[RMDB]
RNA sequence: GGGAACGACUCGAGUAGAGUCGAAAAUACGCCUGUUCGCAGGCGUACUCCAUCCUAAGUCACGCUAUCAAGCACUGUAAGGGAGUCGGAAACGACGACGAUCUUACUGUGCUGACCACGGCGUGAUAUGGAAAAAGUCUGUAUUUCGAUACAGAAAAUACCAUACGAUAUUCGUAUCGUAUGGUAUAAAAGAAACAACAACAACAAC
Reactivity to 2A3 in 0.01 (KOAc 150mM, MgCl2 10mM, bicine 150mM(pH8.5), 24C), signal-to-noise 9, nucleotides 027 to 156: u050a000c000g010c000c000u020g010u040u090c300g020c100a000g000g000c000g010u010a010c010u000c020c010a120u050c000c000u070a150a050g020u000c000a000c000g000c010u030a040u180c070a110a020g000c000a010c010u020g000u000a000a010g000g010g010a030g000u000c010g030g140a270a190a130c130g200a040c000g030a030c000g000a050u010c000u000u010a000c000u010g000u010g000c000u000g000a010c040c020a110c220g020g000c000g000u000g000a000u000a010u030g000g000a060a070a010a030a020g120u010c000u010g020u010a010u020u210u100c260g070a020u010a010c010a000g020a080a040a010
Reactivity to DMS in 0.01 (KOAc 150mM, MgCl2 10mM, bicine 150mM(pH8.5), 24C), signal-to-noise 6, nucleotides 027 to 156: u000a010c010g010c000c000u000g010u000u000c300g040c010a020g020g010c000g030u000a000c040u000c050c040a210u000c020c020u010a090a270g000u000c010a010c010g030c020u000a100u000c030a120a050g010c000a010c010u000g020u000a020a030g010g000g010a300g010u000c000g000g000a200a210a200c080g020a130c010g010a040c020g010a300u000c000u000u000a010c010u000g010u000g020c000u000g000a120c100c070a050c080g020g010c000g030u010g010a010u000a100u000g020g000a040a050a050a110a150g010u000c010u010g010u000a040u000u000u010c200g030a110u000a040c000a030g000a040a070a150